[RMDB]
RNA sequence: GGGAACGACUCGAGUAGAGUCGAAAACUCUGAGUCUUCGGACUCAGAGAAACGCUUUCGACUCUGAUACCAACAAACGCGAGUUUGUUGGAAUAAUCGCAAAAAGGUGGGAGUUCGCUCCCACCAAGUACGCAAUGUCGUUCGCGACAUUGCGUACAAAAGAAACAACAACAACAAC
Reactivity to DMS in 0.01 (KOAc 150mM, MgCl2 10mM, bicine 150mM(pH8.5), 24C), signal-to-noise 1, nucleotides 027 to 126: c000u000c000u000g000a000g010u000c010u000u010c230g000g000a010c000u000c000a010g010a000g000a040a000a050c300g020c200u000u000u000c000g000a000c000u000c000u000g010a170u000a130c000c000a010a000c010a000a000a000c000g000c300g000a130g000u000u020u000g010u000u010g000g000a030a020u000a120a070u000c010g010c170a010a040a090a090a090g000g020u000g010g010g020a020g050u000u010c210g000c020u000c000c000c000a010c000c000a000a030
Structure probing data (DMS) for a 177-nucleotide construct. Source: RMDB library M2PK50, as collected in RNAgym. The reactions ran in a buffer of 150 mM KOAc, 10 mM MgCl2 and 150 mM bicine (pH 8.5), at 24 C. DMS adducts were read by reverse transcription with MarathonRT.